[RMDB]
RNA sequence: GGGAACGACUCGAGUAGAGUCGAAAAACAAUUCAACAUCAUAUUUGAGUGAGGACACAGACCCAAAUCAUAUCAGCAGUCUAGGACACAAGGACUACAAUUCCUGGCCUAGUUUUGGUGCUGUACUAUGCUGGGCUCGGAGAUGGUGGACUUGCGGCAGCUGCCAAAGGUUCGCCUUUGGCAGCUGAAAAGAAACAACAACAACAAC
Reactivity to 2A3 in 0.01 (KOAc 150mM, MgCl2 10mM, bicine 150mM(pH8.5), 24C), signal-to-noise 1, nucleotides 027 to 156: a030c060a050a120u110u200c190a020a110c070a070u240c010a000u140a240u260u240u140g050a080g010u060g010a030g040g000a000c070a000c010a010g160a190c000c000c000a010a040a010u280c040a000u050a000u300c000a010g050c000a010g020u000c000u020a000g040g000a040c040a060c000a300a020g000g150a050c010u100a060c040a150a200u200u020c000c000u000g060g050c000c000u000a000g020u000u030u090u140g130g030u020g040c030u010g000u010a020c000u010a000u000g000c000u010g010g010g000c040u000c050g000g030a050g000a010u060g120g020u010g000g040a040c010u070u000g000c030g090g070